Annotation:
This 207-nucleotide RNA was probed chemically with 2A3 and DMS. Values cover nucleotides 27 to 156. The 2A3 profile rests on 2,460 reads. It was measured as part of the RMDB library M2RFPK. The DMS profile rests on 1,940 reads.
[RMDB]
RNA sequence: GGGAACGACUCGAGUAGAGUCGAAAAGUGCCUCGUGGGCCCGGCAUGCCAACCUGAUCCGAAGUUCAAGGUGGUUUCUCUGGCCUUCCAGAGAGAUGCGCGUCGGAAGAACCGACGAACAAACCUUAAAACAAAACGACGUUCGCGUCGUUUUGAACGUAGAGUAUGUCUUCGGACAUACUCUACGAAAAGAAACAACAACAACAAC
Reactivity to 2A3 in 0.01 (KOAc 150mM, MgCl2 10mM, bicine 150mM(pH8.5), 24C), signal-to-noise 3, nucleotides 027 to 156: g020u020g020c000c000u040c040g060u090g000g030g040c000c030c030g000g000c020a010u110g020c020c010a050a080c020c020u040g020a040u080c020c060g100a130a020g050u110u110c040a030a010g010g000u020g000g000u000u060u000c030u010c000u010g020g020c030c040u180u060c050c000a010g010a000g010a010g000a040u110g080c060g010c010g040u000c010g000g030a100a070g020a150a130c000c010g010a000c010g030a040a020c050a040a080a070c010c020u100u230a020a110a050a050c010a000a000a000a000c000g000a010c000g010u040u090c240g000c000g100u010c010g000u000u000u000u000g000a030a010
Reactivity to DMS in 0.01 (KOAc 150mM, MgCl2 10mM, bicine 150mM(pH8.5), 24C), signal-to-noise 1, nucleotides 027 to 156: g000u000g010c040c000u000c020g010u000g040g000g030c020c010c070g030g030c130a060u000g020c090c080a020a100c000c000u000g010a150u000c020c050g000a100a180g040u000u010c000a060a040g010g010u010g000g000u000u000u000c010u000c010u000g010g000c240c160u000u020c050c030a010g000a060g010a080g000a120u000g000c050g030c000g000u010c010g000g000a150a220g010a190a120c010c000g040a030c010g030a030a020c030a000a090a150c050c030u020u020a040a100a060a110c000a020a000a000a040c010g030a010c010g040u000u000c300g030c040g080u000c000g030u000u000u010u000g010a040a130